[RMDB]
RNA sequence: GGGAACGACUCGAGUAGAGUCGAAAAGAUAGUUUCGACUAUCCAUGGUCCUAAGUCAGCAACAGCGAUCCACGUUCGGAGAUGUGGUCGGAAACGACCACGGAAUUGAACGAUGGGAUCGACAUGCUGAUAUGGAAGUUUUUAGAUUCGUCUAAAAUGACUUAAAUCUCUUCGGAGAUUUAAGUCAAAAAGAAACAACAACAACAAC
Reactivity to 2A3 in 0.01 (KOAc 150mM, MgCl2 10mM, bicine 150mM(pH8.5), 24C), signal-to-noise 3, nucleotides 027 to 156: g030a020u060a020g000u090u120u180c240g080a030c010u020a050u040c020c050a170u140g150g030u080c000c000u050a120a040g000u010c030a000g000c000a020a060c020a190g050c000g000a000u000c000c000a000c020g010u000u010c020g070g000a090g000a050u110g000u000g000g000u010c000g030g040a080a090a080c010g000a000c000c000a010c000g000g010a030a040u060u060g000a000a010c010g060a140u100g200g000g000a000u000c000g000a040c000a020u040g000c010u000g000a000u010a030u050g030g040a040a070g060u020u020u050u070u130a020g010a060u150u160c090g110u220c130u300a010a270a020a030
Reactivity to DMS in 0.01 (KOAc 150mM, MgCl2 10mM, bicine 150mM(pH8.5), 24C), signal-to-noise 2, nucleotides 027 to 156: g010a020u000a010g000u000u000u010c280g010a120c010u010a030u000c010c030a110u010g040g000u000c010c010u010a170a240g020u000c030a030g030c000a030a140c050a260g000c030g010a020u020c000c000a210c010g000u000u000c010g020g000a210g000a300u000g010u000g040g000u000c000g020g000a110a150a300c000g030a030c000c000a010c050g010g010a150a150u000u010g010a050a010c000g010a090u010g050g090g040a010u000c000g020a030c030a300u000g010c000u000g020a000u030a150u000g020g010a040a060g000u000u000u000u000u000a010g010a270u000u010c220g000u010c000u010a040a050a080a240